[RMDB]
RNA sequence: GGGAACGACUCGAGUAGAGUCGAAAAAAUAGCUAAAAACUAGAAACAACUCAAAUGUCCUUCAAUGAGUGAACAGUUGAAUGUACUUGUAUUAGUCCAUUUUCACACUGCUGAUAAAGACAUACCCGAGACCGAGAAGAAAAAGAGGUUUAAUGGACUGCUAAUUUACGUUCGCGUAAAUUAGCAGAAAAGAAACAACAACAACAAC
Reactivity to 2A3 in 0.01 (KOAc 150mM, MgCl2 10mM, bicine 150mM(pH8.5), 24C), signal-to-noise 2, nucleotides 027 to 156: a000a000u090a040g000c060u100a130a040a140a020a070c020u050a070g110a120a060a010c080a050a030c040u010c090a130a080a030u050g000u060c050c000u060u080c090a080a080u060g010a020g070u060g020a050a040c050a060g040u080u050g050a020a000u000g020u010a000c020u070u090g170u240a180u130u090a110g010u010c020c000a020u010u030u080u120c020a020c020a030c040u050g000c020u050g020a070u110a100a100a030g030a020c010a020u120a080c000c000c010g010a020g030a040c000c030g040a020g000a210a020g090a060a120a030a060a000g070a070g030g050u030u030u030a070a070u040g020g010a000
Reactivity to DMS in 0.01 (KOAc 150mM, MgCl2 10mM, bicine 150mM(pH8.5), 24C), signal-to-noise 1, nucleotides 027 to 156: a070a190u000a020g020c000u020a060a030a110a040a030c020u000a000g000a160a110a090c040a140a090c000u050c010a010a170a100u020g010u000c030c030u000u000c090a160a110u010g040a080g020u030g050a070a040c000a110g020u010u000g000a040a000u000g020u000a020c010u000u000g050u010a100u020u000a030g010u000c020c010a070u000u000u000u020c070a030c100a000c000u000g000c030u020g010a110u000a000a000a030g010a030c000a090u000a100c040c020c020g000a120g000a060c050c030g000a110g020a050a110g000a100a090a010a020a090g020a110g000g000u000u000u010a080a080u020g020g000a300